An RNA of 177 nucleotides, treated with 2A3 and DMS and read out base by base. The 2A3 profile rests on 1,013 reads. DMS (dimethyl sulfate) methylates the pairing face of unpaired adenines and cytosines. Reactivities are rounded to 0.1 and cut off at 0 and 3. The reactions ran in a buffer of 150 mM KOAc, 10 mM MgCl2 and 150 mM bicine (pH 8.5), at 24 C.
[RMDB]
RNA sequence: GGGAACGACUCGAGUAGAGUCGAAAACUUUGAAGCAUCAAUAUAGUAGGCAGUCAGCAGUUCACUAGUAAGGGAUCCAUGGAUUUUUCACCCAUCUCUAUAUUGUUGUGAUAAGUAGGCGGCUAGCGCAGGUAGGUUAAUUCGUUAACCUACCUGCAAAAGAAACAACAACAACAAC
Reactivity to 2A3 in 0.01 (KOAc 150mM, MgCl2 10mM, bicine 150mM(pH8.5), 24C), signal-to-noise 1, nucleotides 027 to 126: c050u100u040u040g040a070a030g040c010a010u030c000a000a030u040a010u020a100g130u010a040g020g010c010a000g120u100c020a010g000c000a020g020u010u090c010a020c150u090a050g120u110a090a070g010g020g000a020u020c020c040a020u060g080g020a120u110u100u050u090u150c050a070c010c010c030a040u040c060u000c010u010a030u010a000u150u040g020u020u000g050u050g020a010u010a110a000g010u030a030g110g080c050g110g000c070u090a050g080c030
Reactivity to DMS in 0.01 (KOAc 150mM, MgCl2 10mM, bicine 150mM(pH8.5), 24C), signal-to-noise 3, nucleotides 027 to 126: c020u010u000u010g000a190a190g010c010a020u000c010a010a010u010a040u010a020g010u010a050g010g010c090a060g010u000c100a070g020c060a200g010u000u000c050a060c040u010a110g010u010a110a120g010g010g000a030u000c030c050a050u000g010g010a080u000u010u000u020u000c180a120c070c000c040a030u010c060u000c010u000a020u000a020u000u000g010u000u000g000u000g000a120u000a000a030g010u000a090g000g030c060g000g000c070u000a060g020c280